Structure probing data (2A3) for a 207-nucleotide construct. Reactivities are given for positions 27 through 156. The reactions ran in a buffer of 150 mM KOAc, 10 mM MgCl2 and 150 mM bicine (pH 8.5), at 24 C.

RNA sequence: GGGAACGACUCGAGUAGAGUCGAAAAGCAACUUAGGAUUUUAGGCUCCCCGUGCGUGUCUCGAACCAUGCCGGGCCAAACCCACGGGGGCUGGCGGUCCCCGUGCGGUCAAAAUCAAUCCGCUGGAAAAACAGUUCUAGCUUCGGCUAGAACUGAACACUCGCACUUCAUUCGUGAAGUGCGAGUGAAAAGAAACAACAACAACAAC
Reactivity to 2A3 in 0.01 (KOAc 150mM, MgCl2 10mM, bicine 150mM(pH8.5), 24C), signal-to-noise 1, nucleotides 027 to 156: g010c000a000a150c060u080u250a130g100g030a130u130u150u030u120a040g000g020c020u150c000c040c000c010g080u180g060c030g010u020g010u010c060u040c300g020a040a010c040c010a010u000g000c000c000g010g020g000c060c060a070a040a000c030c000c000a000c010g000g000g020g000g010c010u010g000g000c010g000g000u010c000c020c000c000g000u000g010c120g020g000u050c040a090a040a000a070u150c050a010a100u000c020c020g000c060u080g050g010a110a130a000a000a000c000a000g000u000u040c000u000a030g000c010u030u000c280g010g030c000u000a000g000a000a000c000u000g000a000a000